Structure probing data (2A3 and DMS) for a 177-nucleotide construct. For 2A3, 12,297 sequencing reads were counted. For DMS the reverse transcriptase was MarathonRT. 2A3 adducts were read by reverse transcription with SuperScript II with manganese. The reactions ran in a buffer of 150 mM KOAc, 10 mM MgCl2 and 150 mM bicine (pH 8.5), at 24 C.
RNA sequence: GGGAACGACUCGAGUAGAGUCGAAAAUUUGGUGAAAGCUUUAGAACCUUCCAAUUGGGCUGCGGCUUGCGUUGGGCCAAAGAUAGUCAGGCCCGCCGCGCGGAAGGCGUCAACCACACCGAUGACGCCUCGAAUCUAAAUUCGUUUAGAUUCGAGGAAAAGAAACAACAACAACAAC
Reactivity to 2A3 in 0.01 (KOAc 150mM, MgCl2 10mM, bicine 150mM(pH8.5), 24C), signal-to-noise 7, nucleotides 027 to 126: u030u020u080g000g000u020g050a180a060a040g050c060u140u180u130a090g040a110a070c000c000u010u000c020c010a110a270u140u130g090g050g000c040u060g030c070g100g000c030u060u140g010c050g070u060u080g000g000g000c000c010a030a070a010g150a070u080a040g190u150c120a040g000g010c000c000c000g000c010c000g000c010g000c020g000g000a010a000g000g010c010g030u020c010a020a030c000c010a030c000a000c020c000g010a030u030g020a020c060g040
Reactivity to DMS in 0.01 (KOAc 150mM, MgCl2 10mM, bicine 150mM(pH8.5), 24C), signal-to-noise 8, nucleotides 027 to 126: u010u010u000g020g020u000g010a110a100a120g010c130u000u000u000a130g010a280a050c020c010u000u010c030c020a110a270u010u010g000g010g010c020u010g020c100g020g010c020u000u000g020c100g010u000u010g010g010g010c010c020a040a090a120g000a190u000a080g010u010c170a170g010g010c000c010c000g020c090c020g010c010g010c140g000g000a030a020g000g010c030g010u000c080a050a070c070c040a270c030a040c020c010g010a050u000g000a120c180g000